[RMDB]
RNA sequence: GGGAACGACUCGAGUAGAGUCGAAAAGAUGAACAUAUAUCAGCAACACAUUUCAAGGAUCAUAUCUUGCAUGAGGAUAGUUUGGAUAUGAUAACUAUAUAUUAUGGAUCCUUUCGACAUUGGGGACGUGAGGCUUGCCAUUCGUGGCAAGCCUCACAAAAGAAACAACAACAACAAC
Reactivity to 2A3 in 0.01 (KOAc 150mM, MgCl2 10mM, bicine 150mM(pH8.5), 24C), signal-to-noise 1, nucleotides 027 to 126: g100a120u060g200a190a000c050a000u080a000u000a000u220c100a000g060c100a000a260c000a100c100a300u070u270u300c020a000a000g040g000a000u000c000a000u000a040u040c000u000u120g030c000a100u300g040a060g070g040a000u160a160g090u000u000u160g000g000a000u000a000u060g200a140u000a000a000c000u000a000u040a010u000a000u300u020a000u240g040g040a080u000c000c000u000u000u190c100g000a000c000a040u060u030g000g000g140g000a000c040